An RNA of 177 nucleotides, treated with DMS and 2A3 and read out base by base. In probing experiments dimethyl sulfate is read out at A N1 and C N3, which are open when not base-paired. Conditions: 150 mM KOAc, 10 mM MgCl2 and 150 mM bicine (pH 8.5), 24 C. The data come from the RNA Mapping Database (RMDB), library OK2TRN. Reactivities are given for positions 27 through 126.

RNA sequence: GGGAACGACUCGAGUAGAGUCGAAAACUCAGCUUCGUAGCACCCACUAAUUAUGAAAAUUGGUGUUCUCAGAUCCUGUUGCCUAUCAUACCACAGGCUGGUGUUAGCACAAGGGAAAUCCCCAUACCCGUCGUAAUUUAUUCGUAAAUUACGACGGAAAAGAAACAACAACAACAAC
Reactivity to DMS in 0.01 (KOAc 150mM, MgCl2 10mM, bicine 150mM(pH8.5), 24C), signal-to-noise 4, nucleotides 027 to 126: c050u000c050a150g010c050u000u010c120g020u000a050g000c060a100c070c090c020a050c030u000a030a040u000u000a180u010g000a080a050a060a050u000u000g010g010u000g010u000u000c050u010c060a100g010a110u000c010c010u010g020u000u000g000c100c060u000a060u020c140a060u000a100c070c030a050c070a070g010g020c110u000g020g000u000g000u000u000a030g010c100a050c100a030a070g010g000g020a050a070a130u010c030c000c010c070a130u010a130c170
Reactivity to 2A3 in 0.01 (KOAc 150mM, MgCl2 10mM, bicine 150mM(pH8.5), 24C), signal-to-noise 5, nucleotides 027 to 126: c010u010c030a010g040c050u110u120c050g110u110a010g010c000a030c010c010c010a010c020u050a070a070u140u120a150u240g220a210a220a060a040u040u030g010g000u010g040u170u040c070u030c040a050g000a130u050c010c020u040g060u120u040g050c010c010u110a140u230c050a070u100a140c000c020a030c020a070g030g020c030u010g000g020u030g000u050u040a020g010c030a020c040a140a050g040g010g030a010a120a050u060c000c000c000c010a010u120a100c000